[RMDB]
Source information:
Structure probing data (DMS and 2A3) for a 177-nucleotide construct.

RNA sequence: GGGAACGACUCGAGUAGAGUCGAAAAACACAACUUAUAAUCGUUUCAUGGUAAUUGCUAUUAGACUUGUUGAAUGCCUUUAUUGGUCUGGGUGGCUUUUUCCAUUGGCUUAUUAAAGGGUGAAAGAACUACAUGGAUAGUUCGCUAUCCAUGUAGUAAAAGAAACAACAACAACAAC
Reactivity to DMS in 0.01 (KOAc 150mM, MgCl2 10mM, bicine 150mM(pH8.5), 24C), signal-to-noise 5, nucleotides 027 to 126: a080c040a070c060a040a050c050u010u010a060u000a070a060u010c190g010u000u000u010c080a050u010g000g010u000a050a040u000u000g010c030u000a050u000u000a040g000a030c050u000u010g010u000u010g000a080a070u000g010c090c080u000u000u010a070u010u000g010g010u010c010u010g010g020g020u000g010g000c160u010u010u000u000u000c010c010a050u000u010g000g010c050u010u000a040u000u000a030a040a060g000g010g010u000g010a080a090a100g000a070
Reactivity to 2A3 in 0.01 (KOAc 150mM, MgCl2 10mM, bicine 150mM(pH8.5), 24C), signal-to-noise 4, nucleotides 027 to 126: a000c010a020c030a070a090c050u130u110a100u090a240a100u090c040g030u020u110u110c060a040u030g020g000u080a140a120u090u060g010c010u040a050u080u070a060g020a060c050u040u050g030u100u110g170a100a070u140g070c010c000u140u170u080a100u070u110g030g000u000c020u040g000g090g040u030g040g000c000u050u070u020u060u020c000c000a010u010u060g030g000c010u010u030a020u030u110a110a070a030g020g030g000u050g060a090a080a030g060a040

The 2A3 profile rests on 3,649 reads. Conditions: 150 mM KOAc, 10 mM MgCl2 and 150 mM bicine (pH 8.5), 24 C.